[RMDB]
The record gives the reactivity of an RNA of 207 nucleotides to 2A3. 2A3 adducts were read by reverse transcription with SuperScript II with manganese. Source: RMDB library OK3TST, as collected in RNAgym. The RNA was probed in 150 mM KOAc, 10 mM MgCl2 and 150 mM bicine (pH 8.5) at 24 C.
RNA sequence: GGGAACGACUCGAGUAGAGUCGAAAAGUGCUGGAGCACAGAGGAAGAAGGAAGCAUGGUGUCAGAUGAGCUUGAGGAACAGGCAGGGGUAAGAUCCUAUAGGGCUUUAUGAUCAAGGAGAGAAGUUUAGAUUUUAUUUCCAGGGAGAUGGGGAAGAGGACGGAUAAUCAUUCGUGAUUAUCCGUCCAAAAGAAACAACAACAACAAC
Reactivity to 2A3 in 0.01 (KOAc 150mM, MgCl2 10mM, bicine 150mM(pH8.5), 24C), signal-to-noise 1, nucleotides 027 to 156: g010u030g070c020u010g020g080a110g060c030a040c030a020g100a050g000g020a010a010g000a010a040g050g000a160a000g070c040a040u170g030g000u090g070u070c100a090g020a110u110g030a020g010c000u040u100g020a010g030g020a020a040c020a020g120g000c000a020g000g000g000g020u030a040a030g040a000u010c000c000u070a090u210a080g050g020g000c010u020u080u200a060u080g050a060u080c030a020a020g020g010a020g000a010g000a110a000g000u040u090u030a010g000a040u000u000u060u090a170u020u150u030c010c030a030g010g010g000a110g030a030u000g000g020g000g020a000a080g070a070